[RMDB]
RNA sequence: GGGAACGACUCGAGUAGAGUCGAAAACAUAAGACCUCAGAGCUAAUGAGCCACAUACCUACCCAAGGUGAGAGCUCCUUCUCUCGCAAUGUGUAACUCAUGAUUCUCAUGACCCCUGGUUGGAGAGCGCGCUAACACGCCUUCGGGCGUGUUAGAAUACUCAAUAAUCUUUCGAGAUUAUUGAGUAAAAAGAAACAACAACAACAAC
Reactivity to DMS in 0.01 (KOAc 150mM, MgCl2 10mM, bicine 150mM(pH8.5), 24C), signal-to-noise 2, nucleotides 027 to 156: c040a130u000a060a070g010a140c000c040u000c060a060g000a090g010c090u000a110a100u000g000a070g070c010c020a020c020a060u000a050c040c000u000a090c080c140c130a140a120g000g010u000g000a050g000a050g050c180u000c150c060u000u000c000u020c000u010c010g000c010a300a030u020g010u000g010u000a110a040c050u000c030a070u010g000a120u020u010c030u010c010a100u010g000a120c030c000c030c070u000g020g000u000u000g020g000a090g000a080g020c060g020c050g030c020u000a030a000c000a000c000g020c010c000u010u000c290g040g000g020c010g030u000g010u000u000a010g000a070a150
Reactivity to 2A3 in 0.01 (KOAc 150mM, MgCl2 10mM, bicine 150mM(pH8.5), 24C), signal-to-noise 2, nucleotides 027 to 156: c020a050u190a140a000g060a020c030c050u040c060a020g020a010g030c020u060a100a010u050g010a000g070c040c020a010c010a020u100a050c000c010u090a110c030c020c040a070a010g000g000u030g030a010g020a000g010c000u240c070c040u200u110c010u020c010u020c010g050c100a060a110u020g010u010g000u070a030a080c000u010c020a010u010g020a120u300u040c030u010c020a120u100g060a100c000c000c000c040u040g060g000u030u040g050g020a070g000a000g070c100g000c000g030c030u000a000a000c000a000c060g000c000c010u050u060c130g060g000g000c010g000u000g000u000u000a000g000a000a000
Source: RMDB library M2RFPK, as collected in RNAgym. The record gives the reactivity of an RNA of 207 nucleotides to DMS and 2A3. Reactivities are given for positions 27 through 156. 2A3 adducts were read by reverse transcription with SuperScript II with manganese. The DMS profile rests on 2,972 reads.